[RMDB]
RNA sequence: GGGAACGACUCGAGUAGAGUCGAAAACCCCGUGUGGAACACACGACUAAGCUUCGGCUUAGUAAGAAGAACUUAGGAUUUUAGCUUCCCCGGCGUGUCUCGAACCAUGCCGGGCCAAACCCAUAGGGCUGGCGGUCCCUGUGCGGUCAAAAUUCAAUAGCGAUAUUUAGUUCGCUAAAUAUCGCUAAAAAGAAACAACAACAACAAC
Reactivity to 2A3 in 0.01 (KOAc 150mM, MgCl2 10mM, bicine 150mM(pH8.5), 24C), signal-to-noise 3, nucleotides 027 to 156: c000c000c000c010g010u030g000u020g070g240a200a040c020a000c000a000c080g030a000c010u000a000a000g020c000u040u200c270g040g000c000u040u000a010g010u120a000a070g000a010a000g000a050a020c030u020u010a020g010g000a020u040u000u000u000a010g010c000u010u010c010c000c000c000g000g010c000g030u010g010u000c080u050c230g050a030a020c010c000a000u010g010c000c000g000g000g000c010c000a000a010a000c010c000c000a020u030a000g010g010g000c020u040g120g090c070g050g030u100c000c000c000u000g000u010g010c140g010g000u010c010a000a000a010a010u030u020c020a050a120
Reactivity to DMS in 0.01 (KOAc 150mM, MgCl2 10mM, bicine 150mM(pH8.5), 24C), signal-to-noise 1, nucleotides 027 to 156: c000c010c000c000g040u000g000u000g000g030a170a180c020a050c050a020c050g020a180c010u000a000a040g010c030u000u010c300g050g010c000u000u000a020g030u010a060a080g000a060a070g000a090a060c050u000u000a050g000g000a050u000u000u000u010a120g000c050u000u000c010c000c000c020g000g000c020g080u000g020u000c110u000c220g010a210a150c140c000a050u000g010c040c000g060g000g050c100c040a010a110a040c010c000c010a110u000a040g000g020g060c030u000g000g010c050g010g000u010c000c000c000u000g070u000g010c130g060g000u000c010a020a030a000a080u000u000c030a140a210